The record gives the reactivity of an RNA of 207 nucleotides to 2A3. 2A3 is a SHAPE reagent: it acylates the 2'-hydroxyl of flexible nucleotides of all four kinds.
RNA sequence: GGGAACGACUCGAGUAGAGUCGAAAAUCAUACCCUAACCGUGGAAACCGGUCGAGGCCCGGAAGGGAGCAGACUCACUGUGGGCAACCGUCGCUUGCGGGGUCGCGGGGUGGAGAAGAGAUCUCAGCCUACUGGAGCUUCCGAGGCGCAGCGACCUCUAUUCUUGUAGGUUCGCCUACAAGAAUAGAAAAGAAACAACAACAACAAC
Reactivity to 2A3 in 0.01 (KOAc 150mM, MgCl2 10mM, bicine 150mM(pH8.5), 24C), signal-to-noise 2, nucleotides 027 to 156: u040c010a030u150a210c000c000c000u090a160a070c090c030g040u050g020g130a130a080a080c100c030g000g000u000c000g030a060g020g060c000c000c000g020g080a010a030g020g030g010a020g050c020a010g020a050c000u040c030a170c040u060g000u020g020g000g020c050a060a060c100c060g240u130c080g030c080u030u080g040c020g010g010g000g000u050c020g000c030g020g090g020g010u070g080g000a010g030a120a030g120a010g040a150u050c000u000c000a010g040c020c000u120a190c080u140g060g020a090g050c000u010u000c030c010g070a220g050g000c080g000c080a060g050c000g010a030c030c000u000
The RNA was probed in 150 mM KOAc, 10 mM MgCl2 and 150 mM bicine (pH 8.5) at 24 C. It was measured as part of the RMDB library ARCHII. For 2A3 the reverse transcriptase was SuperScript II with manganese.